This 177-nucleotide RNA was probed chemically with DMS and 2A3.
[RMDB]
RNA sequence: GGGAACGACUCGAGUAGAGUCGAAAAGGAAAUUUUUCUCUGCCUAUCGACUUAACAAACAUCGGAUGGAAGAGUCUGAACGCUUGUUAAAAGAGCUAGACGCUGAAAUGAAAACGAUCAGGAGAAAGGAAUAAUUGGUGUUCGCACCAAUUAUUCCAAAAGAAACAACAACAACAAC
Reactivity to DMS in 0.01 (KOAc 150mM, MgCl2 10mM, bicine 150mM(pH8.5), 24C), signal-to-noise 1, nucleotides 027 to 126: g010g010a070a080a120u010u020u000u010u000c010u000c020u010g010c010c030u010a070u000c010g010a110c130u000u000a040a010c110a000a010a020c060a080u000c010g010g060a050u000g000g010a090a090g010a190g020u010c010u020g000a040a070c180g020c090u010u000g030u010u010a060a050a190a130g000a160g020c130u020a060g010a060c070g080c020u000g040a040a060a070u000g000a060a000a100a090c090g020a060u010c060a060g010g010a040g010a040a040a080
Reactivity to 2A3 in 0.01 (KOAc 150mM, MgCl2 10mM, bicine 150mM(pH8.5), 24C), signal-to-noise 1, nucleotides 027 to 126: g080g030a030a110a120u160u140u000u120u000c030u000c000u040g070c010c020u040a050u020c010g060a080c010u070u160a060a000c010a040a040a000c000a040u020c000g100g010a050u020g040g160a120a080g040a080g130u000c020u030g000a090a030c090g000c040u000u000g020u060u040a060a070a090a070g070a020g000c010u040a050g090a180c060g000c060u010g010a000a050a130u190g050a000a100a010a030c020g020a020u060c050a040g000g070a020g020a030a040a000
The reactions ran in a buffer of 150 mM KOAc, 10 mM MgCl2 and 150 mM bicine (pH 8.5), at 24 C.